Chemical mapping of a 177-nucleotide RNA with DMS and 2A3. Conditions: 150 mM KOAc, 10 mM MgCl2 and 150 mM bicine (pH 8.5), 24 C. It was measured as part of the RMDB library OK2TST.
RNA sequence: GGGAACGACUCGAGUAGAGUCGAAAACGCGGUGCUGCUGCCAUUAGUGGAGAGCCACCGCAUCUUCAACACAGCGUUUAACGCGACGUACGUUUCUGUGCGUCCCCCGGGCGCGACGGCUGCAGCAAUAGCCAUACCAUUUCGAUGGUAUGGCUAUAAAAGAAACAACAACAACAAC
Reactivity to DMS in 0.01 (KOAc 150mM, MgCl2 10mM, bicine 150mM(pH8.5), 24C), signal-to-noise 5, nucleotides 027 to 126: c170g010c000g000g010u000g010c050u010g010c010u000g000c000c010a190u000u010a140g030u000g000g000a040g000a020g000c050c040a160c040c040g020c010a030u000c010u000u000c020a080a110c120a120c140a140g000c030g020u000u000u010a060a100c180g020c090g000a010c020g020u000a020c010g010u000u000u010c160u020g020u000g000c010g010u000c000c010c020c040c030g030g010g000c020g000c030g010a080c100g000g020c010u000g010c040a030g000c090a120
Reactivity to 2A3 in 0.01 (KOAc 150mM, MgCl2 10mM, bicine 150mM(pH8.5), 24C), signal-to-noise 4, nucleotides 027 to 126: c060g030c010g000g030u050g000c040u020g000c000u040g040c000c020a110u120u200a110g110u050g000g010a080g010a020g050c040c020a030c010c000g020c000a010u010c010u070u030c020a100a120c070a020c040a140g020c010g010u040u100u170a180a030c040g010c050g040a010c000g000u030a000c010g010u040u210u190c140u220g000u020g000c010g010u000c000c010c000c030c030g040g060g000c020g000c010g020a030c050g010g000c010u020g000c010a020g020c030a030
DMS adducts were read by reverse transcription with MarathonRT.